[RMDB]
RNA sequence: GGGAACGACUCGAGUAGAGUCGAAAAGAGAAAUGGCCCAACCGACUGUUUAUCAAAAACACAGCACUCUGCAAAGACGCAAGUCGAAGUAUAGGGUGUGACACGUGACCAAUGCCGAAAGAUUAAGGGAAUUUCGAUUAUUCGUAAUCGAAAUUCCAAAAGAAACAACAACAACAAC
Reactivity to 2A3 in 0.01 (KOAc 150mM, MgCl2 10mM, bicine 150mM(pH8.5), 24C), signal-to-noise 5, nucleotides 027 to 126: g160a000g030a000a070a070u160g060g030c010c000c000a010a020c000c010g100a080c050u060g050u030u100u070a180u070c100a010a030a090a050a010c020a010c010a020g010c000a000c010u020c010u010g030c010a050a080a070g010a020c010g010c060a070a030g000u000c010g030a080a020g010u020a030u120a150g000g000g000u020g000u010g010a010c030a000c090g030u010g020a020c010c020a020a050u100g020c010c010g070a060a090a040g090a040u120u160a050a040g070
Reactivity to DMS in 0.01 (KOAc 150mM, MgCl2 10mM, bicine 150mM(pH8.5), 24C), signal-to-noise 3, nucleotides 027 to 126: g000a110g010a050a090a060u030g050g000c000c010c040a100a110c140c040g010a050c090u000g000u020u000u000a140u020c120a040a060a130a030a060c060a140c040a190g000c000a050c000u000c010u000g010c040a020a090a130g020a010c000g000c270a070a130g000u010c000g020a050a230g060u000a070u010a060g010g020g010u000g000u000g000a130c120a070c030g010u000g000a050c060c010a030a040u020g000c050c040g000a050a020a020g000a100u000u020a070a090g000
An RNA of 177 nucleotides, treated with 2A3 and DMS and read out base by base. The reactions ran in a buffer of 150 mM KOAc, 10 mM MgCl2 and 150 mM bicine (pH 8.5), at 24 C.